RNA sequence: GGGAACGACUCGAGUAGAGUCGAAAACAUCGACACUUCGUCGGUCUCCGGUUUUCCGACCCGUCCCCCGUCGGAAACCGGAUGGUAGCGGUAGUCUCAUUCCCCUCUCCGGGCUGCCGCUGUGUAGCACUACUGUUUGGUUCGCCAAACAGUAGUGAAAAGAAACAACAACAACAAC
Reactivity to 2A3 in 0.01 (KOAc 150mM, MgCl2 10mM, bicine 150mM(pH8.5), 24C), signal-to-noise 1, nucleotides 027 to 126: c050a050u040c020g000a020c020a020c130u260u160c150g000u010c000g030g020u000c010u000c000c000g020g030u040u040u170u000c000c010g000a000c050c030c100g300u210c010c000c000c000c000g000u000c010g000g000a000a000a000c000c010g010g000a010u040g050g060u080a000g010c010g010g000u000a000g020u000c030u000c080a110u080u110c000c000c020c010u060c000u050c070c020g000g040g000c000u010g000c040c010g000c000u000g010u020g000u000a050g070
Reactivity to DMS in 0.01 (KOAc 150mM, MgCl2 10mM, bicine 150mM(pH8.5), 24C), signal-to-noise 4, nucleotides 027 to 126: c130a030u000c010g000a010c010a120c280u010u010c190g000u000c000g000g000u000c020u000c000c000g000g000u000u000u010u000c000c000g000a020c010c120c140g010u010c020c000c000c060c210g010u010c000g000g000a010a000a010c000c000g000g000a000u000g010g000u000a010g010c000g010g030u000a020g010u000c000u000c100a300u000u010c010c000c010c150u000c070u010c160c110g000g000g000c010u000g000c000c000g030c000u000g010u010g000u010a110g000
Chemical mapping of a 177-nucleotide RNA with 2A3 and DMS. The reactions ran in a buffer of 150 mM KOAc, 10 mM MgCl2 and 150 mM bicine (pH 8.5), at 24 C. Reactivities are given for positions 27 through 126. For DMS the reverse transcriptase was MarathonRT.